[RMDB]
RNA sequence: GGGAACGACUCGAGUAGAGUCGAAAAGAAAGAAACAUCACCCUAUGGAAAAGAAAGGCAGCCACAAACGAAACCUGAGGAAACAGGAAGCCACAACGUGCGCCAUGUGGUUACCAAAGGGAGAAAAACGCUGGAUAAUAUUCGUAUUAUCCAGCGUAAAAGAAACAACAACAACAAC
Reactivity to 2A3 in 0.01 (KOAc 150mM, MgCl2 10mM, bicine 150mM(pH8.5), 24C), signal-to-noise 4, nucleotides 027 to 126: g110a000a090a010g100a020a120a000c030a050u090c040a070c000c010c000u010a090u040g030g010a140a030a020a040g080a080a150a030g050g000c020a010g040c080c030a050c070a030a080a020c070g060a090a030a010c000c000u030g020a110g030g280a110a060a000c000a020g010g000a000a010g010c030c010a040c030a110a080c100g090u130g040c040g010c020c000a000u020g000u000g000g000u050u050a020c000c010a020a100a000g020g020g010a060g100a060a080a000a000
Reactivity to DMS in 0.01 (KOAc 150mM, MgCl2 10mM, bicine 150mM(pH8.5), 24C), signal-to-noise 3, nucleotides 027 to 126: g030a050a080a090g000a060a110a080c040a130u020c160a080c000c000c000u020a090u040g000g000a080a090a090a050g000a020a090a080g000g010c020a070g010c140c050a020c060a100a180a150c110g000a060a090a090c010c010u010g020a160g020g020a120a200a150c010a010g000g000a070a080g000c050c070a030c050a050a040c180g000u010g000c070g000c010c040a120u000g010u000g000g010u000u010a030c020c010a040a080a060g000g010g010a140g000a050a020a030a060